[RMDB]
RNA sequence: GGGAACGACUCGAGUAGAGUCGAAAAAGUAUGGCGAGGGCCUCUGCGAGGGAUUCCACGAAGACGAACGAGAGCUUUUGACGAACCUUCCGGGGAACGUCGGCGAGGUCUUUCUCGUUCUCCUUCGCCUUAGGUUCUGUUUCGACAGAACCUAAGGAAAAGAAACAACAACAACAAC
Reactivity to DMS in 0.01 (KOAc 150mM, MgCl2 10mM, bicine 150mM(pH8.5), 24C), signal-to-noise 3, nucleotides 027 to 126: a080g010u010a070u020g000g010c010g030a070g000g010g000c150c030u000c040u010g030c060g000a040g000g010g010a220u000u010c030c050a180c070g010a040a040g000a090c140g000a010a030c020g010a010g000a070g010c030u000u000u010u010g020a020c020g020a020a300c020c000u000u010c230c080g000g000g020g010a020a300c030g000u000c020g010g000c170g020a030g000g000u020c100u010u000u010c000u010c010g010u000u010c020u010c020c010u000u000c030g000
Reactivity to 2A3 in 0.01 (KOAc 150mM, MgCl2 10mM, bicine 150mM(pH8.5), 24C), signal-to-noise 1, nucleotides 027 to 126: a000g140u150a060u140g030g000c050g010a050g000g050g000c030c020u020c030u060g050c020g000a050g070g010g050a100u120u000c040c010a020c040g000a010a010g040a010c020g000a000a020c010g000a010g000a020g060c000u050u050u110u170g010a000c000g010a000a020c010c000u060u080c110c180g100g000g000g000a020a020c000g000u020c000g040g000c100g050a030g030g000u050c040u020u130u010c000u000c000g010u000u000c020u000c000c010u020u000c030g010

An RNA of 177 nucleotides, treated with DMS and 2A3 and read out base by base. For DMS, 2,330 sequencing reads were counted. It was measured as part of the RMDB library OK2TRN. 2A3 adducts were read by reverse transcription with SuperScript II with manganese. The 2A3 profile rests on 1,759 reads.